This 177-nucleotide RNA was probed chemically with 2A3 and DMS. The reactions ran in a buffer of 150 mM KOAc, 10 mM MgCl2 and 150 mM bicine (pH 8.5), at 24 C.
RNA sequence: GGGAACGACUCGAGUAGAGUCGAAAACUGCGUAAGCAUUGGGAAUGGAUGACGUUCUCCGCAGAUAGCGUAUCUUCGGUACAUACGCUCACGGACGAUCUUCCGCUGGAGUCGCUGGCCGAUCAGAUGCAUACGAGGGGUUCGCCCCUCGUAUGCAAAAAGAAACAACAACAACAAC
Reactivity to 2A3 in 0.01 (KOAc 150mM, MgCl2 10mM, bicine 150mM(pH8.5), 24C), signal-to-noise 2, nucleotides 027 to 126: c000u050g030c020g050u080a110a040g030c050a090u100u080g070g030g090a020a040u050g020g090a070u200g050a060c010g000u030u000c050u000c000c030g010c000a010g000a120u080a010g030c020g040u030a020u010c060u150u190c050g010g040u070a070c000a030u100a000c030g010c000u020c010a080c060g020g040a020c040g150a170u010c050u060u020c040c030g000c050u050g080g010a030g020u010c000g000c050u050g040g070c010c000g030a030u090c040a030g080a100
Reactivity to DMS in 0.01 (KOAc 150mM, MgCl2 10mM, bicine 150mM(pH8.5), 24C), signal-to-noise 2, nucleotides 027 to 126: c070u000g000c060g060u010a120a140g010c130a060u010u010g000g050g000a050a070u020g000g020a090u000g010a150c010g000u000u010c020u020c030c070g000c040a060g000a130u000a050g000c000g020u000a030u000c060u000u000c120g010g010u030a070c060a040u000a040c040g020c000u000c060a100c050g000g000a130c240g000a080u000c120u000u000c020c020g000c070u020g010g010a020g010u000c060g000c200u010g000g030c000c000g020a090u000c080a100g000a150